The data come from the RNA Mapping Database (RMDB), library OK2TST.
The record gives the reactivity of an RNA of 177 nucleotides to DMS and 2A3.
DMS adducts were read by reverse transcription with MarathonRT.
For DMS, 5,442 sequencing reads were counted.
The reactions ran in a buffer of 150 mM KOAc, 10 mM MgCl2 and 150 mM bicine (pH 8.5), at 24 C.
RNA sequence: GGGAACGACUCGAGUAGAGUCGAAAAGCUCGAGCGCGAGCAGGUGCUCGCCCUCAUCGACGAUGAAAUCCAGAAGCUUCCGGCGCGUCAACGGGAAGCCUUCCUGAUGCGUUAUUGGGAGGAUAUAGGUAGCUAAUUAGUUCGCUAAUUAGCUACCAAAAGAAACAACAACAACAAC
Reactivity to DMS in 0.01 (KOAc 150mM, MgCl2 10mM, bicine 150mM(pH8.5), 24C), signal-to-noise 5, nucleotides 027 to 126: g010c070u000c050g000a040g010c300g000c000g000a010g010c000a190g020g020u010g010c020u000c010g010c010c060c020u000c080a130u000c100g010a050c090g010a120u000g000a110a090a110u010c040c060a160g000a150a140g010c000u000u000c000c000g000g000c030g000c030g010u010c040a090a100c140g010g000g010a060a110g000c130c100u000u000c030c020u000g000a030u010g010c080g010u000u000a100u000u010g010g020g000a050g000g000a060u010a080u010a090
Reactivity to 2A3 in 0.01 (KOAc 150mM, MgCl2 10mM, bicine 150mM(pH8.5), 24C), signal-to-noise 6, nucleotides 027 to 126: g030c040u030c070g020a010g000c030g010c010g010a010g010c060a050g200g270u300g020c010u010c000g000c000c020c000u030c020a100u080c040g080a070c040g040a040u140g120a070a060a050u040c050c020a040g040a220a020g050c000u020u010c010c000g050g000c010g000c010g030u010c020a100a120c080g000g000g030a020a050g140c020c020u060u030c000c000u020g010a000u020g020c030g020u030u070a120u180u160g010g010g010a020g010g010a010u080a000u020a150